[RMDB]
RNA sequence: GGGAACGACUCGAGUAGAGUCGAAAAGAAGCGGUACUCCUCGGCAUCCUUCCAGUAGUCUUCCGCGGGAAAGCCAUCGGCAUCUCGCCGGUAAGUACCCAGCAUGUAAAAUUCAUUCACGGCCUGGUAGGGACAGCACCCUUUUGACACCGGCAGGACUUUCUGUCGAAUUCGUUCGACAGAAAGUAAAAGAAACAACAACAACAAC
Reactivity to 2A3 in 0.01 (KOAc 150mM, MgCl2 10mM, bicine 150mM(pH8.5), 24C), signal-to-noise 1, nucleotides 027 to 156: g030a030a020g030c020g070g000u080a080c040u080c030c000u020c100g090g000c020a050u000c000c000u080u020c010c000a110g030u110a020g020u110c030u040u000c070c070g000c000g010g000g000a040a160a010g040c020c030a130u120c140g010g060c010a030u110c140u060c080g080c080c060g070g000u040a030a000g010u020a060c000c010c020a010g100c030a030u050g010u190a000a060a210a170u110u190c060a060u050u090c070a010c080g010g010c020c000u040g040g000u030a100g010g000g050a040c000a040g100c010a110c000c000c000u060u020u120u050g010a010c030a010c040c000g060g000c030a040g010g130
Chemical mapping of a 207-nucleotide RNA with 2A3.
Values cover nucleotides 27 to 156.
For 2A3 the reverse transcriptase was SuperScript II with manganese.
The RNA was probed in 150 mM KOAc, 10 mM MgCl2 and 150 mM bicine (pH 8.5) at 24 C.